[RMDB]
This 207-nucleotide RNA was probed chemically with 2A3 and DMS. For DMS the reverse transcriptase was MarathonRT. The data come from the RNA Mapping Database (RMDB), library OK3TST. 2A3 adducts were read by reverse transcription with SuperScript II with manganese.
RNA sequence: GGGAACGACUCGAGUAGAGUCGAAAAGAUUAUGUGGGAGAUGCGCCCCGUCGUGUCACUGGAAACAGAAUUGCGAGUCGCUCGCACUAGCGAUAUUGAUGUGUACUGUAGCGUACACUGUGCUACUUUAAGGUAUCAUGACGAUACCACGUCAAAACAUAUCCACUGAGUUCGCUCAGUGGAUAUGAAAAGAAACAACAACAACAAC
Reactivity to 2A3 in 0.01 (KOAc 150mM, MgCl2 10mM, bicine 150mM(pH8.5), 24C), signal-to-noise 8, nucleotides 027 to 156: g050a050u150u140a060u230g040u100g020g010g000a090g010a070u080g040c010g030c020c030c010c010g050u120c030g000u030g040u030c030a010c080u060g020g060a050a070a050c030a030g080a140a100u100u110g010c010g010a010g040u050c000g020c060u010c010g040c030a040c040u030a000g000c010g040a040u020a110u140u190g100a140u090g020u010g020u020a010c020u060g110u220a030g080c040g030u030a010c030a010c030u020g040u070g010c020u020a060c000u060u080u160a120a030g000g000u010a000u000c040a070u140g110a060c090g010a000u010a010c010c010a020c040g040u050c030a000a000a050a070
Reactivity to DMS in 0.01 (KOAc 150mM, MgCl2 10mM, bicine 150mM(pH8.5), 24C), signal-to-noise 3, nucleotides 027 to 156: g020a150u000u000a050u000g020u010g020g010g020a120g010a140u000g030c090g000c030c030c040c000g040u010c030g010u000g040u010c020a060c050u000g010g000a140a090a260c070a080g000a060a090u010u010g000c000g000a060g000u010c060g020c030u000c050g020c060a120c090u000a050g030c010g000a080u000a080u030u000g040a100u000g030u010g000u000a050c010u010g010u000a090g020c050g000u000a070c060a060c080u000g020u000g030c010u000a030c020u000u010u000a110a140g020g010u000a010u000c020a170u010g020a230c150g030a060u010a030c000c010a030c100g000u000c070a040a050a080a170